[RMDB]
RNA sequence: GGGAACGACUCGAGUAGAGUCGAAAAGUCAUUAACGCGUGUGCACUCUCUAACACGAAUUACCCAGUUAUUUUCGACUUUACUCGUGUCGUUAUAGCGUGAUAUGAGAGAGUAAUCCGCGACCAAACUAAAGAGUAGCGUUCGCGCUACUCUUUAGAAAAGAAACAACAACAACAAC
Reactivity to 2A3 in 0.01 (KOAc 150mM, MgCl2 10mM, bicine 150mM(pH8.5), 24C), signal-to-noise 1, nucleotides 027 to 126: g060u110c100a160u140u140a060a020c060g000c020g100u000g010u030g000c010a030c100u010c000u000c010u000a000a020c000a010c030g040a040a140u160u140a180c060c100c020a050g050u060u040a090u040u000u000u000c000g000a000c010u000u000u000a000c010u000c010g000u000g010u010c010g000u000u010a000u000a000g000c010g000u120g020a010u010a010u190g030a030g000a010g000a020g020u010a020a030u000c000c000g000c010g040a030c000c000a070a070a040
Reactivity to DMS in 0.01 (KOAc 150mM, MgCl2 10mM, bicine 150mM(pH8.5), 24C), signal-to-noise 2, nucleotides 027 to 126: g000u010c150a080u000u010a050a040c060g030c020g020u000g030u000g000c120a030c020u000c000u000c000u010a140a020c010a010c000g010a200a130u010u020a100c060c110c050a170g000u000u000a030u000u000u010u000c000g000a020c000u010u000u000a010c000u000c010g000u000g000u000c000g000u000u000a020u020a110g020c000g010u010g010a010u000a110u010g010a020g000a090g020a030g010u000a160a070u000c020c000g000c000g000a110c030c010a080a070a200